Source: RMDB library OK2TRN, as collected in RNAgym. Chemical mapping of a 177-nucleotide RNA with 2A3 and DMS. For 2A3, 1,960 sequencing reads were counted. High 2A3 reactivity points to a flexible backbone, as in loops and unpaired stretches. The RNA was probed in 150 mM KOAc, 10 mM MgCl2 and 150 mM bicine (pH 8.5) at 24 C.
RNA sequence: GGGAACGACUCGAGUAGAGUCGAAAAGAUACGGCAUCAAAGCAAGCGGAUUCGGGAAUCGGAGAGCCAGCGCCAUCGCCAUCCGUCUCUCCCGAACCAGAGGCGGAGAAAUCGCAGCAGGAAUCGACCAUACCACCAUGUUCGCAUGGUGGUAUGGAAAAGAAACAACAACAACAAC
Reactivity to 2A3 in 0.01 (KOAc 150mM, MgCl2 10mM, bicine 150mM(pH8.5), 24C), signal-to-noise 1, nucleotides 027 to 126: g050a020u110a110c030g010g000c040a020u000c040a120a120a030g030c010a030a040g000c030g020g070a210u010u030c030g000g000g000a030a060u070c010g030g000a060g000a020g070c020c030a030g050c030g000c040c010a060u110c050g000c040c000a050u000c010c000g020u000c010u000c000u000c000c030c020g010a000a010c000c000a000g000a020g070g010c000g040g020a010g040a020a090a010u100c060g000c030a050g020c020a040g090g090a040a080u090c040g050a070
Reactivity to DMS in 0.01 (KOAc 150mM, MgCl2 10mM, bicine 150mM(pH8.5), 24C), signal-to-noise 3, nucleotides 027 to 126: g000a080u010a080c120g000g010c060a080u000c060a070a170a110g000c050a070a070g030c160g000g010a160u000u010c040g000g020g010a050a060u010c030g000g010a100g030a170g030c080c060a050g010c040g040c040c110a050u000c110g000c010c070a150u010c010c000g000u000c040u000c130u000c030c020c020g000a020a060c140c080a050g000a060g010g010c000g010g000a140g000a040a060a090u000c030g000c050a090g040c050a100g020g020a090a100u010c100g020a180